[RMDB]
Background: An RNA of 207 nucleotides, treated with 2A3 and read out base by base. The 2A3 profile rests on 479 reads. The reactions ran in a buffer of 150 mM KOAc, 10 mM MgCl2 and 150 mM bicine (pH 8.5), at 24 C.
RNA sequence: GGGAACGACUCGAGUAGAGUCGAAAAUACUACUCGCAACUGCCUAAAACUCAAAGGACUUGGCGGUGCUUCACAUCCACCUAGAGGAGCCUGUUCUAUAAUCGAUAAACCCCGAUAGACCUUACCAACCCUUGCCAAUUCAGCCUAUAUACCGCCAGUUCUACCAUGGGUUCGCCCAUGGUAGAACAAAAGAAACAACAACAACAAC
Reactivity to 2A3 in 0.01 (KOAc 150mM, MgCl2 10mM, bicine 150mM(pH8.5), 24C), signal-to-noise 1, nucleotides 027 to 156: u120a030c000u000a000c000u000c010g040c070a200a090c050u050g000c000c000u050a070a050a010a040c120u180c150a130a110a130g050g000a050c040u050u070g020g000c020g000g060u010g020c030u080u150c050a050c000a030u030c050c010a060c020c040u100a060g000a040g100g000a080g010c000c000u090g020u000u000c100u070a060u050a250a120u060c000g020a000u000a050a170a100c020c000c000c000g000a010u020a010g020a020c000c060u010u040a000c030c070a010a070c000c000c000u000u040g030c010c010a020a020u040u050c000a070g030c000c040u050a050u010a010u050a140c000c110g000c060c000a020